[RMDB]
RNA sequence: GGGAACGACUCGAGUAGAGUCGAAAAGACAAAUGCAGCAUAAUAGGCUAAGCAGGAAAGGGACGGUAGCUCCUGGUGUCAGUUCAUACGGUGUGAUGCAUCUGCGUCGUGCACACAUGCACCCAAAGUCAAUACAUCGUUUCGACGAUGUAUUGACAAAAGAAACAACAACAACAAC
Reactivity to 2A3 in 0.01 (KOAc 150mM, MgCl2 10mM, bicine 150mM(pH8.5), 24C), signal-to-noise 4, nucleotides 027 to 126: g060a020c040a010a080a020u120g040c010a010g000c010a040u030a170a100u080a290g090g000c020u020a050a020g000c000a000g060g030a050a060a040g040g000g010a020c040g060g040u060a020g020c040u030c040c020u020g040g020u030g020u020c040a050g040u040u060c040a030u070a130c080g050g000u040g000u040g040a180u040g000c000a030u040c030u130g050c040g070u150c020g010u030g000c000a000c010a000c000a010u060g050c010a070c000c010c010a010a080a010
Reactivity to DMS in 0.01 (KOAc 150mM, MgCl2 10mM, bicine 150mM(pH8.5), 24C), signal-to-noise 4, nucleotides 027 to 126: g000a100c070a070a070a080u000g010c050a040g020c030a060u000a070a100u000a110g010g000c030u000a050a110g030c030a040g010g000a040a060a060g010g010g000a050c080g000g020u010a080g020c070u000c030c040u000g000g000u010g010u000c030a030g000u000u010c060a070u010a080c120g010g010u000g020u000g000a110u020g010c040a050u010c060u000g010c110g010u000c100g010u000g000c020a040c060a050c040a030u000g010c050a100c010c010c030a060a060a090
An RNA of 177 nucleotides, treated with 2A3 and DMS and read out base by base.
Reactivities are rounded to 0.1 and cut off at 0 and 3.
DMS adducts were read by reverse transcription with MarathonRT.
The data come from the RNA Mapping Database (RMDB), library M2PK90.